Structure probing data (DMS) for a 177-nucleotide construct. DMS adducts were read by reverse transcription with MarathonRT. Values are in units of 0.01, from 0 to 300, in steps of 10. Source: RMDB library TTRINS, as collected in RNAgym.
RNA sequence: GGGAACGACUCGAGUAGAGUCGAAAAGAUAUGGAGUAUAAGUGUGCUCUCAUGACAAGGGAGAUCGCUAUCGGAAACGAUAGAUGAUCAUCGAUCUUGCAUGAGAGCACACUUAUACUCCUAAGUCCAUCAUAUCCUUCUUCGGAAGGAUAUGAUGAAAAGAAACAACAACAACAAC
Reactivity to DMS in 0.01 (KOAc 150mM, MgCl2 10mM, bicine 150mM(pH8.5), 24C), signal-to-noise 6, nucleotides 027 to 126: g000a100u010a300u000g000g010a020g010u000a000u000a000a020g020u000g020u000g020c000u000c000u000c000a010u010g000a170c010a010a010g000g000g000a090g010a020u000c000g000c000u000a000u000c010g010g000a160a110a270c000g010a010u000a000g010a040u020g020a010u010c010a230u000c240g000a090u010c000u000u010g000c010a000u000g000a010g000a010g000c010a000c000a000c000u000u000a000u000a000c000u000c000c010u000a010a060g010u000c040